[RMDB]
RNA sequence: GGGAACGACUCGAGUAGAGUCGAAAAGGUCGAAGGGGCCGCUGGGGUUAAAACUCGCAAGUUCCGGUGACAGAUCGGGGAAAAAAUCUCGGGAGCAUCGAAUUGUUUUCAGGCCCUUUCCUCGGGUUAUUUUUGUAUAGUUCGCUAUACAAAAAUAAAAAGAAACAACAACAACAAC
Reactivity to DMS in 0.01 (KOAc 150mM, MgCl2 10mM, bicine 150mM(pH8.5), 24C), signal-to-noise 3, nucleotides 027 to 126: g010g010u000c110g010a100a050g000g020g030g020c030c060g040c180u000g010g000g020g010u010u030a050a110a130a210c010u000c030g010c090a130a110g000u020u000c060c020g020g010u050g010a060c020a060g000a130u020c010g010g020g010g000a000a030a080a100a080a080u020c020u000c050g000g000g020a110g010c000a010u000c120g010a090a060u010u000g000u000u000u020u010c130a120g010g000c010c000c020u000u010u000c010c030u010c030g000g010g020u010
Reactivity to 2A3 in 0.01 (KOAc 150mM, MgCl2 10mM, bicine 150mM(pH8.5), 24C), signal-to-noise 3, nucleotides 027 to 126: g030g030u050c030g020a050a010g020g000g010g020c040c020g000c150u090g030g010g020g030u030u100a040a060a130a120c010u020c010g020c050a020a030g040u080u010c070c010g010g020u030g010a040c020a040g140a030u100c000g020g000g000g030a010a080a000a040a120a150u080c010u000c000g010g010g010a060g010c010a010u030c030g040a080a050u080u020g030u030u050u110u060c040a030g010g000c000c010c010u000u010u010c010c000u030c020g060g020g000u020